The record gives the reactivity of an RNA of 207 nucleotides to 2A3. Values are in units of 0.01, from 0 to 300, in steps of 10. The RNA was probed in 150 mM KOAc, 10 mM MgCl2 and 150 mM bicine (pH 8.5) at 24 C. It was measured as part of the RMDB library ARCHII.
RNA sequence: GGGAACGACUCGAGUAGAGUCGAAAAGACCGCCGAAAGGACCCCGUGGCCGGGCUAAUUGCUUUGGGUAUGGUCAAAACAUCGAGGAAAAGGAUGAUCCGCAGCGAAACCCUCUUGUUGUACAAAAGUGGGUGGCGUUCACAGACUAAACGGCGAUCUAGGUACAAUACUUCGGUAUUGUACCUAGAAAAGAAACAACAACAACAAC
Reactivity to 2A3 in 0.01 (KOAc 150mM, MgCl2 10mM, bicine 150mM(pH8.5), 24C), signal-to-noise 1, nucleotides 027 to 156: g010a000c000c020g000c010c050g020a070a040a010g050g000a070c020c050c000c080g040u170g090g060c100c000g030g020g050c070u090a110a070u090u120g100c000u040u050u130g050g000g000u050a080u150g010g010u050c000a000a020a000a040c000a070u060c000g030a110g070g020a050a060a040a000g060g000a010u020g050a020u100c090c040g040c100a000g000c010g000a090a000a000c020c050c010u030c000u070u090g110u050u090g080u080a030c120a050a150a000a030g000u000g000g000g020u020g000g030c010g010u080u070c050a060c030a110g060a050c050u050a020a280a000c030g090g000c020g000a000u000